[RMDB]
RNA sequence: GGGAACGACUCGAGUAGAGUCGAAAACAUCCAGUGUUCGCACUGGAUGAGAGGAAUGUGGAUCGGCAAACUACAUACCAAAUGCUGAGCUCGAAAGAGCAACGAUUUCGUCGUUCGCGACGAAAAAACUAAUGCAAUAAUUCGUUAUUGCAUUAGUAAAAGAAACAACAACAACAAC
Reactivity to 2A3 in 0.01 (KOAc 150mM, MgCl2 10mM, bicine 150mM(pH8.5), 24C), signal-to-noise 9, nucleotides 027 to 126: c010a000u000c000c000a000g000u000g040u050u080c220g030c090a000c000u010g000g000a000u010g000a010g010a010g010g060a080a040u070g010u050g020g040a100u100c090g130g020c100a030a070a080c040u060a020c020a050u080a060c000c020a050a060a040u130g020c070u090g050a020g030c000u000c010g040a090a050a030g010a000g000c010a010a020c030g050a070u020u020u010c000g000u000c010g010u030u060c250g000c010g050a000c000g000a030a000a000a000a000
Reactivity to DMS in 0.01 (KOAc 150mM, MgCl2 10mM, bicine 150mM(pH8.5), 24C), signal-to-noise 9, nucleotides 027 to 126: c010a010u000c000c000a010g020u000g010u000u010c220g030c000a010c000u000g000g000a000u000g000a070g010a110g010g010a100a040u000g010u000g000g010a050u000c050g010g000c130a080a120a070c040u000a040c040a040u000a110c030c030a060a090a080u010g010c080u000g010a260g010c010u000c000g000a090a080a120g000a010g010c000a060a080c190g000a190u010u000u000c010g000u000c000g020u000u010c180g020c010g000a010c010g000a000a000a020a060a090
Chemical mapping of a 177-nucleotide RNA with 2A3 and DMS. For 2A3 the reverse transcriptase was SuperScript II with manganese. The reactions ran in a buffer of 150 mM KOAc, 10 mM MgCl2 and 150 mM bicine (pH 8.5), at 24 C. Reactivities are given for positions 27 through 126.